The record gives the reactivity of an RNA of 177 nucleotides to 2A3 and DMS. The RNA was probed in 150 mM KOAc, 10 mM MgCl2 and 150 mM bicine (pH 8.5) at 24 C. For DMS the reverse transcriptase was MarathonRT.
RNA sequence: GGGAACGACUCGAGUAGAGUCGAAAAUACGCGAGGUUCGCCUCGCGUAAAAGAGGAGCGUAAACGUGAGCGUACCUAGUGCUGUACAUCGUUCCUACACGAAUGCACAUGGUUUCGACCAUGUGAAGGAACGUAUUCUGUUCGCAGAAUACGUUCCAAAAGAAACAACAACAACAAC
Reactivity to 2A3 in 0.01 (KOAc 150mM, MgCl2 10mM, bicine 150mM(pH8.5), 24C), signal-to-noise 3, nucleotides 027 to 126: u020a010c000g000c000g010a010g000g010u040u120c180g070c050c010u010c000g000c010g000u000a000a000a000a020g130a030g030g000a050g000c020g020u120a040a050a130c080g050u060g060a020g010c020g050u090a100c000c030u090a070g100u100g130c030u050g020u100a000c020a070u030c020g000u000u000c000c000u050a020c080a000c040g130a100a040u230g020c000a000c000a010u000g000g030u020u050u170c210g060a020c000c040a000u000g000u010g000a010a030
Reactivity to DMS in 0.01 (KOAc 150mM, MgCl2 10mM, bicine 150mM(pH8.5), 24C), signal-to-noise 2, nucleotides 027 to 126: u000a000c000g040c000g010a020g010g010u000u010c280g010c000c000u000c000g000c020g000u000a000a020a110a080g020a050g010g010a150g020c040g000u020a040a070a110c100g030u000g000a140g010c060g020u000a070c080c090u000a090g000u010g010c070u000g000u000a020c050a230u000c010g020u020u000c000c000u000a090c090a060c130g000a110a060u040g000c000a020c000a010u000g000g010u000u030u010c220g020a010c000c000a000u010g000u010g000a030a100